[RMDB]
RNA sequence: GGGAACGACUCGAGUAGAGUCGAAAAGAUAUGGAGAACUACACUGUCCCAUUCGGAAACGAAUGUGGAUUUCGAGUGCUCCUAAGUCAAAGACGUCUGGAACGUGUUCGCACGUUCCAGACGUCAAGUAACGUCAUACGUUCGCGUAUGACGUUACAAAAGAAACAACAACAACAAC
Reactivity to DMS in 0.01 (KOAc 150mM, MgCl2 10mM, bicine 150mM(pH8.5), 24C), signal-to-noise 2, nucleotides 027 to 126: g000a040u000a300u000g000g010a020g010a030a000c020u010a150c050a070c250u010g000u000c000c000c000a010u000u000c010g010g010a100a080a160c000g010a000a020u000g010u020g040g000a020u000u000u000c170g000a020g000u000g000c030u000c000c000u000a060a130g020u000c050a060a130a180g020a010c000g000u000c000u000g000g000a000a020c000g040u000g000u000u000c220g020c000a010c010g030u000u010c000c010a000g000a000c000g000u000c000a000a090
Reactivity to 2A3 in 0.01 (KOAc 150mM, MgCl2 10mM, bicine 150mM(pH8.5), 24C), signal-to-noise 2, nucleotides 027 to 126: g010a000u100a060u170g040g020a000g030a030a000c010u300a160c140a030c110u080g060u000c000c000c000a010u000u000c030g030g070a060a070a110c040g000a010a020u120g080u300g040g020a050u010u100u220c100g080a010g000u020g000c000u000c000c000u010a190a060g060u010c020a100a010a140g020a000c000g000u000c020u000g010g020a000a000c000g040u050g120u080u080c290g020c140a020c000g000u000u000c000c000a000g020a010c000g000u000c000a000a000